Chemical mapping of a 177-nucleotide RNA with 2A3 and DMS. Values cover nucleotides 27 to 126. 2A3 adducts were read by reverse transcription with SuperScript II with manganese. Conditions: 150 mM KOAc, 10 mM MgCl2 and 150 mM bicine (pH 8.5), 24 C. For DMS the reverse transcriptase was MarathonRT.
RNA sequence: GGGAACGACUCGAGUAGAGUCGAAAAGCCUCGCUGACGGCGUGGAAAGGGCUCUCUCUGAGGCCCGAGUACGCUGAAAGUGCCACAGAAACGUAGCUUUUCUGGCGACAGAAAAGAUGGAACGCGGGCGAUAACCAUCGUUCGCGAUGGUUAUCGCAAAAGAAACAACAACAACAAC
Reactivity to 2A3 in 0.01 (KOAc 150mM, MgCl2 10mM, bicine 150mM(pH8.5), 24C), signal-to-noise 1, nucleotides 027 to 126: g040c000c000u020c010g010c010u000g000a010c020g010g050c010g030u030g030g040a180a070a080g000g000g000c010u030c010u000c010u020c180u300g030a050g000g000c000c000c000g010a010g020u010a040c000g000c000u000g050a000a000a050g030u040g060c050c020a090c010a040g110a040a190a010c040g020u050a000g000c000u000u000u000u000c000u000g000g020c020g020a020c000a000g000a000a000a000a010g010a060u070g010g030a070a000c020g000c030g020g000
Reactivity to DMS in 0.01 (KOAc 150mM, MgCl2 10mM, bicine 150mM(pH8.5), 24C), signal-to-noise 2, nucleotides 027 to 126: g020c030c000u020c010g000c010u000g000a300c040g010g020c040g000u000g000g020a060a090a180g010g000g020c000u140c000u000c010u080c150u080g000a050g000g030c000c000c000g010a100g000u100a060c000g040c000u000g000a030a300a010g000u000g000c080c050a150c160a100g030a060a050a040c040g000u000a210g010c020u000u000u000u000c000u000g000g000c220g000a180c000a020g000a000a000a000a000g000a110u010g000g000a090a140c050g000c080g010g000